[RMDB]
RNA sequence: GGGAACGACUCGAGUAGAGUCGAAAAGAUAUGGAUCCCGGUGUAAUAGUAUUAGGACAUGAUCCUUGCAUCGGAAACGAUGUAAUGAUCAACAGCCUAAUACUAUUACACCCGGGAUCCUAAGUCACCUAAUGCGUAUGUUCGCAUACGCAUUAGGAAAAGAAACAACAACAACAAC
Reactivity to 2A3 in 0.01 (KOAc 150mM, MgCl2 10mM, bicine 150mM(pH8.5), 24C), signal-to-noise 1, nucleotides 027 to 126: g030a030u130a050u230g000g000a020u010c000c000c010g000g000u010g000u020a010a020u010a010g000u020a030u030u000a030g030g010a030c190a290u150g000a010u000c000c010u010u000g000c030a000u010c000g060g050a070a070a050c030g010a000u010g020u000a000a020u020g010a000u000c010a030a030c060a000g030c000c000u000a010a000u000a000c000u000a000u000u000a000c010a000c000c010c010g020g030g010a010u000c000c010u000a000a010g020u000c010a010
Reactivity to DMS in 0.01 (KOAc 150mM, MgCl2 10mM, bicine 150mM(pH8.5), 24C), signal-to-noise 3, nucleotides 027 to 126: g010a060u000a300u000g020g000a040u000c010c000c000g010g020u000g010u000a000a010u000a010g000u000a010u000u000a010g000g000a050c080a280u000g010a010u000c010c100u000u000g000c000a000u010c010g000g000a140a090a190c020g000a010u000g030u010a000a010u000g000a000u000c000a030a100c300a230g010c020c000u000a000a000u000a000c010u000a000u000u000a000c010a000c070c040c050g010g010g000a010u000c000c010u010a010a070g010u000c030a240
Source: RMDB library TTRINS, as collected in RNAgym. Chemical mapping of a 177-nucleotide RNA with 2A3 and DMS. The RNA was probed in 150 mM KOAc, 10 mM MgCl2 and 150 mM bicine (pH 8.5) at 24 C. For DMS, 3,460 sequencing reads were counted. DMS adducts were read by reverse transcription with MarathonRT.